[RMDB]
RNA sequence: GGGAACGACUCGAGUAGAGUCGAAAACUACACUACCUACUGGUAGUGAUUGCGCCUUUUCAUUGACUGUACAAAAUAGGUAUUUCACACGAGUCUUUGCACAUUUAUUUGUGACUUAUAAAUAUGGCUUAGACCAUCUGGGUGUGCAAACACCAGAAUCUCUCACCGUGUUCGCACGGUGAGAGAUAAAAGAAACAACAACAACAAC
Reactivity to 2A3 in 0.01 (KOAc 150mM, MgCl2 10mM, bicine 150mM(pH8.5), 24C), signal-to-noise 1, nucleotides 027 to 156: c020u080a020c000a000c000u040a000c000c000u300a300c170u300g050g020u000a000g000u000g070a010u040u120g070c000g060c030c000u050u140u020u050c100a110u120u080g060a010c090u130g040u210a040c020a070a190a050a050u170a100g010g010u070a070u040u150u160c060a000c000a000c010g050a000g100u000c000u040u050u030g000c030a070c030a220u000u100u070a100u050u090u050g130u040g130a240c080u150u080a040u040a070a000a000u170a030u010g030g010c000u030u020a030g000a010c040c020a090u080c050u080g100g000g030u050g000u070g040c000a100a050a000c050a000c030c000a010g070a090

Conditions: 150 mM KOAc, 10 mM MgCl2 and 150 mM bicine (pH 8.5), 24 C. An RNA of 207 nucleotides, treated with 2A3 and read out base by base. Source: RMDB library OK3TST, as collected in RNAgym.